[RMDB]
RNA sequence: GGGAACGACUCGAGUAGAGUCGAAAAGAUAUGGACAGGGAGAUCAGGGAAACUGGUCGGAAACGACCAGGUCCCUAUUGGAUCUUUGAUCUGUCCUAAGUCAAACUCGAACGUUCGCGUUCGAGAACUCUCAUGUUAUCUUCGGAUAACAUGAGAGAAAAGAAACAACAACAACAAC
Reactivity to 2A3 in 0.01 (KOAc 150mM, MgCl2 10mM, bicine 150mM(pH8.5), 24C), signal-to-noise 2, nucleotides 027 to 126: g000a020u090a030u190g000g010a000c010a010g020g000g020a020g000a010u010c030a010g020g000g020a020a090a260c010u000g000g000u010c000g000g020a020a030a010c010g000a010c000c010a000g010g020u020c000c000c000u020a110u070u180g080g000a000u000c000u180u110u060g100a080u020c010u000g000u000c000c000u010a100a000g050u020c040a070a040a160c010u000c000g000a010a010c000g010u080u040c300g030c010g110u000u000c000g010a000g000a010a010
Reactivity to DMS in 0.01 (KOAc 150mM, MgCl2 10mM, bicine 150mM(pH8.5), 24C), signal-to-noise 4, nucleotides 027 to 126: g000a030u000a300u010g000g000a020c000a000g010g000g010a010g000a010u000c010a070g010g000g000a040a110a090c000u000g000g010u000c000g010g010a100a110a230c010g000a010c000c000a000g000g000u000c010c000c000u000a050u010u020g010g010a010u000c010u000u000u000g010a070u020c000u000g000u000c000c000u010a030a070g010u000c030a100a110a220c000u000c000g000a000a010c000g020u010u010c230g010c020g020u000u000c000g010a010g000a060a100